[RMDB]
RNA sequence: GGGAACGACUCGAGUAGAGUCGAAAAUGACCUCAACCAUAGGAUCAGAGGUUUUCUACUACUUUUUGUUGGGAAAGGGUGGGAAGACAGGGUCUCAUUCUAUGGCCCAAGCUGGAAUGCAGUGGUAAGUUCAUACCGUGUUCGCACGGUAUGAACUAAAAGAAACAACAACAACAAC
Reactivity to 2A3 in 0.01 (KOAc 150mM, MgCl2 10mM, bicine 150mM(pH8.5), 24C), signal-to-noise 1, nucleotides 027 to 126: u090g000a000c010c020u060c000a040a000c070c030a170u140a170g000g050a100u140c070a090g030a040g070g000u000u070u040u020c030u060a120c010u020a080c050u020u120u060u100u160g140u050u070g080g000g070a040a010a110g000g050g060u110g070g010g030a000a020g020a080c020a030g020g020g090u010c010u000c010a040u180u000c010u010a010u120g000g020c010c040c000a020a030g000c020u070g070g040a120a120u100g000c000a010g060u050g060g050u020a030
Reactivity to DMS in 0.01 (KOAc 150mM, MgCl2 10mM, bicine 150mM(pH8.5), 24C), signal-to-noise 2, nucleotides 027 to 126: u010g000a090c000c030u000c080a190a140c000c010a050u000a090g000g030a090u010c230a110g000a030g010g000u000u000u000u010c130u000a120c090u000a090c060u000u020u000u010u020g020u020u000g060g020g000a170a070a070g000g020g000u010g000g000g000a070a020g030a040c150a070g050g000g010u000c030u000c070a070u000u020c040u000a030u000g020g010c030c000c020a060a050g010c070u010g000g000a050a050u030g000c040a020g000u000g000g000u000a050

The record gives the reactivity of an RNA of 177 nucleotides to 2A3 and DMS. The reactions ran in a buffer of 150 mM KOAc, 10 mM MgCl2 and 150 mM bicine (pH 8.5), at 24 C. DMS adducts were read by reverse transcription with MarathonRT. It was measured as part of the RMDB library OK2TST. The 2A3 profile rests on 852 reads.